[RMDB]
RNA sequence: GGGAACGACUCGAGUAGAGUCGAAAAUUUCAAAACUCUGGCAGAAGGCCAGCAAGUUGAAUUCACCAUUGAAAAUGGUGCGAAAGGCCCAGCAGCUGCUAACGUAACUGCAAUCUAAGCUUAAUUGCACUGACUAGGAAUUCGUUCCUAGUCAGUGAAAAGAAACAACAACAACAAC
Reactivity to DMS in 0.01 (KOAc 150mM, MgCl2 10mM, bicine 150mM(pH8.5), 24C), signal-to-noise 5, nucleotides 027 to 126: u000u010u010c020a070a070a050a080c040u010c000u000g000g020c000a300g010a200a140g020g010c010c000a000g000c250a040a010g050u000u000g010a060a060u030u010c010a020c000c000a020u000u030g010a060a090a090a040u000g010g010u000g000c180g000a060a140a070g000g020c000c010c010a100g010c010a040g000c060u000g010c000u010a120a140c220g010u000a040a040c020u000g010c010a150a070u020c150u030a050a110g010c070u030u020a060a110u020u020g000
Reactivity to 2A3 in 0.01 (KOAc 150mM, MgCl2 10mM, bicine 150mM(pH8.5), 24C), signal-to-noise 6, nucleotides 027 to 126: u000u030u040c000a030a000a040a010c020u010c010u020g000g000c010a050g080a300a030g300g000c010c000a000g000c060a070a010g030u010u030g010a010a010u060u040c000a000c010c000a000u020u130g120a070a070a020a060u040g000g000u010g020c020g080a110a040a030g060g010c010c010c000a010g000c010a000g000c000u050g020c020u120a140a030c050g070u040a040a020c010u010g000c010a030a070u060c070u130a060a030g050c030u050u180a080a040u200u170g020